[RMDB]
RNA sequence: GGGAACGACUCGAGUAGAGUCGAAAAGAAGAACUAUGAAAGAAUGCAAAGAGGGGGGUGAGAUAAGAAAGAUGAAGAAUGUAGACAGGUGCGGAGACAAAUAGAACUGACAGAAGGGCAUGCAGUCCUCCUCCAGAGUAUUCGUACUCUGGAGGAGAAAAGAAACAACAACAACAAC
Reactivity to DMS in 0.01 (KOAc 150mM, MgCl2 10mM, bicine 150mM(pH8.5), 24C), signal-to-noise 1, nucleotides 027 to 126: g000a130a010g000a060a060c150u030a030u010g010a080a050a210g010a070a160u020g010c040a030a100a100g000a110g010g000g000g000g030g080u000g010a100g000a070u010a050a080g020a100a080a070g030a110u030g000a090a070g000a090a060u000g000u010a030g020a030c140a040g010g040u000g010c100g000g000a100g000a020c080a030a030a000u000a050g040a090a050c160u000g060a100c050a020g000a000a000g000g010g010c080a120u010g000c160a130g000u000c080